[RMDB]
RNA sequence: GGGAACGACUCGAGUAGAGUCGAAAAAGCCUGGUCGAUACGUCGACCAGGCAAUGCCGCCACAACGGCUUCCUGGCGUGGCGGAUCUCAUCCAAUGGAGCAACGCUCCGGAUCCGUCCGGAGCGAAAAAAGCUCUGCUUCUUCGGAAGCAGAGCAACGUUUAGUAUAAGUUCGCUUAUACUAAACGAAAAGAAACAACAACAACAAC
Reactivity to 2A3 in 0.01 (KOAc 150mM, MgCl2 10mM, bicine 150mM(pH8.5), 24C), signal-to-noise 2, nucleotides 027 to 156: a000g300c010c010u010g010g010u000c010g000a010u000a070c190g060u020c000g020a000c000c000a000g000g010c000a000a000u010g000c010c000g000c000c000a010c000a030a040c030g050g000c000u150u150c020c010u030g000g010c020g000u000g000g010c020g000g000a020u030c030u020c030a100u100c070c090a050a160u210g010g000a010g010c020a070a010c010g000c000u000c000c000g000g000a030u020c040c130g070u000c000c010g020g000a000g000c010g010a010a000a000a000a010a000g000c000u000c000u000g000c000u000u000c000u030u030c110g080g000a000a000g000c010a000g000a000g020c000a000a000